Structure probing data (DMS and 2A3) for a 177-nucleotide construct. The RNA was probed in 150 mM KOAc, 10 mM MgCl2 and 150 mM bicine (pH 8.5) at 24 C. It was measured as part of the RMDB libraries RFM100 and RFMREP. As a SHAPE reagent, 2A3 marks flexible, mostly unpaired nucleotides at the ribose 2'-OH. DMS adducts were read by reverse transcription with MarathonRT.
[RMDB]
RNA sequence: GGGAACGACUCGAGUAGAGUCGAAAAAGCUUUACUGCAGCCUGCCGUUGCUCCACAGCUGGGGGUGCGCAGGGUAGGCGGGAGGCUUCGAAGCCCCGUCUCCGGGCGGGGUGGAGCCGUCGAUGAGUGGAUUCUUCAAAUUCGUUUGAAGAAUCCAAAAAGAAACAACAACAACAAC
Reactivity to DMS in 0.01 (KOAc 150mM, MgCl2 10mM, bicine 150mM(pH8.5), 24C), signal-to-noise 3, nucleotides 027 to 126: a060g010c010u000u010u000a140c020u010g000c030a230g010c000c000u000g000c060c040g020u000u020g050c010u000c020c030a090c120a150g020c200u030g020g010g000g000g020u010g020c120g020c020a030g010g010g020u020a030g020g000c000g000g000g010a090g000g000c000u000u000c030g000a300a290g000c000c010c000c000g010u000c000u000c250c140g010g000g000c000g000g000g000g010u000g000g000a140g000c010c010g000u010c100g010a110u010g000a130g030
Reactivity to 2A3 in 0.01 (KOAc 150mM, MgCl2 10mM, bicine 150mM(pH8.5), 24C), signal-to-noise 5, nucleotides 027 to 126: a000g050c020u080u040u160a230c030u060g000c010a030g170c000c010u040g080c060c020g070u120u180g020c010u010c030c040a170c030a170g100c230u250g000g010g000g020g020u050g000c050g010c000a000g080g000g030u080a060g120g050c000g000g020g000a010g000g000c000u030u020c030g000a020a000g010c010c000c000c000g020u000c010u020c050c140g050g000g000c000g000g000g000g000u050g000g010a010g010c020c000g070u120c070g050a190u160g070a030g080